[RMDB]
RNA sequence: GGGAACGACUCGAGUAGAGUCGAAAACUGCUCCGGUUCGCCGGAGCAGAAAUGGAUCCAAUGGAAUCCAAAAUGGAAAUGGAGAUCCAUUAAGGGAUAACAAAACCAGGAUGUUCGCAUCCUGGAAGACGAAAAGAUACUUCGGUAUCUUUUCGUCAAAAGAAACAACAACAACAAC
Reactivity to DMS in 0.01 (KOAc 150mM, MgCl2 10mM, bicine 150mM(pH8.5), 24C), signal-to-noise 2, nucleotides 027 to 126: c000u010g000c000u010c010c010g020g000u000u020c250g040c000c010g020g000a000g020c000a000g000a020a040a060u000g020g000a050u000c000c030a110a090u020g010g010a110a200u000c000c000a000a070a050a080u000g000g010a040a070a110u000g000g010a120g000a120u000c000c000a000u000u000a070a180g020g000g000a020u020a050a130c090a080a070a100a230c000c000a000g000g000a020u000g010u000u000c220g010c000a010u000c000c000u000g030g010a010a010
Reactivity to 2A3 in 0.01 (KOAc 150mM, MgCl2 10mM, bicine 150mM(pH8.5), 24C), signal-to-noise 3, nucleotides 027 to 126: c000u000g030c010u000c000c000g000g060u040u050c190g030c020c000g010g000a000g010c000a010g000a000a000a000u060g050g050a030u020c000c020a010a040u050g040g050a050a030u030c010c000a100a040a010a110u190g070g040a080a070a050u080g060g010a100g020a200u000c000c010a000u010u010a080a080g100g000g010a040u050a150a060c040a020a080a010a070c010c000a000g020g000a010u010g020u040u050c180g010c130a010u000c000c000u000g030g000a000a020

Chemical mapping of a 177-nucleotide RNA with DMS and 2A3.
Values cover nucleotides 27 to 126.
The reactions ran in a buffer of 150 mM KOAc, 10 mM MgCl2 and 150 mM bicine (pH 8.5), at 24 C.
Source: RMDB library M2PK50, as collected in RNAgym.
2A3 adducts were read by reverse transcription with SuperScript II with manganese.